[RMDB]
RNA sequence: GGGAACGACUCGAGUAGAGUCGAAAAGCGUCUUGGGAGGAAGUUCACCCCGUAGAGCUAUAAUAGCCGCUUUCAACGCCUUCUCUGCAGCCUGAUGCGCGUGAAACGCUGCUGCCGCAUACCUCCCUCUAGCUUGGCUUUUCGAAGCCAAGCUAGAAAAAGAAACAACAACAACAAC
Reactivity to 2A3 in 0.01 (KOAc 150mM, MgCl2 10mM, bicine 150mM(pH8.5), 24C), signal-to-noise 1, nucleotides 027 to 126: g040c040g070u100c150u190u080g050g000g000a010g010g000a060a000g040u100u080c060a140c020c020c010c070g140u130a040g070a030g030c040u130a070u100a280a200u120a100g050c000c030g000c080u010u040u030c100a190a100c010g030c010c000u060u020c080u010c060u140g090c070a060g060c000c070u030g040a040u090g030c080g000c030g070u020g140a150a000a030c070g050c020u080g040c000u020g030c000c040g000c010a010u090a100c010c000u000c010c000c000
Reactivity to DMS in 0.01 (KOAc 150mM, MgCl2 10mM, bicine 150mM(pH8.5), 24C), signal-to-noise 2, nucleotides 027 to 126: g010c060g000u010c120u010u010g020g010g020a060g040g010a230a070g000u000u000c050a160c050c030c040c030g000u010a070g010a140g000c020u000a100u000a140a080u000a060g010c010c070g000c050u010u000u000c030a070a090c030g000c010c000u000u000c030u010c070u000g030c050a070g020c010c100u000g010a030u010g000c100g000c010g020u000g000a080a050a060c190g000c010u000g030c020u000g010c120c120g000c090a140u010a140c030c010u010c000c000c000
The data come from the RNA Mapping Database (RMDB), library OK2TRN. Chemical mapping of a 177-nucleotide RNA with 2A3 and DMS. The RNA was probed in 150 mM KOAc, 10 mM MgCl2 and 150 mM bicine (pH 8.5) at 24 C. DMS adducts were read by reverse transcription with MarathonRT. Values cover nucleotides 27 to 126.